[RMDB]
RNA sequence: GGGAACGACUCGAGUAGAGUCGAAAAGUCUCACGAGUGCACAGACAAAGGUAGUUGACUCCGGAGCUACCAGUACUCGAAGGAAUGCGAAAGAGUUCAAGUAUUCCAACCGGAGAAGAACUCAAAAGCCGGAUCAUUAUUUCGAUAAUGAUCCGGCAAAAGAAACAACAACAACAAC
Reactivity to 2A3 in 0.01 (KOAc 150mM, MgCl2 10mM, bicine 150mM(pH8.5), 24C), signal-to-noise 2, nucleotides 027 to 126: g050u000c000u000c000a020c020g000a000g000u010g000c000a080c110a100g260a140c060a220a100a050g000g000u000a030g000u020u000g120a120c010u040c000c000g000g030a050g010c000u000a020c000c000a000g000u000a000c000u000c020g000a010a020g030g050a040a010u030g030c040g060a040a100a130g130a000g010u070u130c080a140a040g020u010a240u100u030c040c020a030a010c000c000g000g010a000g000a000a050g000a000a000c030u030c090a000a000a000a000
Reactivity to DMS in 0.01 (KOAc 150mM, MgCl2 10mM, bicine 150mM(pH8.5), 24C), signal-to-noise 1, nucleotides 027 to 126: g000u000c000u000c190a200c000g000a020g000u010g000c270a180c130a060g000a110c300a020a300a300g000g000u000a060g000u000u020g000a000c040u000c060c000g050g000a000g000c000u000a000c000c000a080g000u000a060c000u000c000g000a110a080g000g060a190a040u110g000c130g000a100a250a000g000a000g000u000u090c000a300a300g070u040a040u000u090c090c300a150a060c000c000g100g000a280g000a000a190g000a000a040c000u000c000a210a000a190a070
Annotation:
An RNA of 177 nucleotides, treated with 2A3 and DMS and read out base by base. 2A3 adducts were read by reverse transcription with SuperScript II with manganese. The reactions ran in a buffer of 150 mM KOAc, 10 mM MgCl2 and 150 mM bicine (pH 8.5), at 24 C.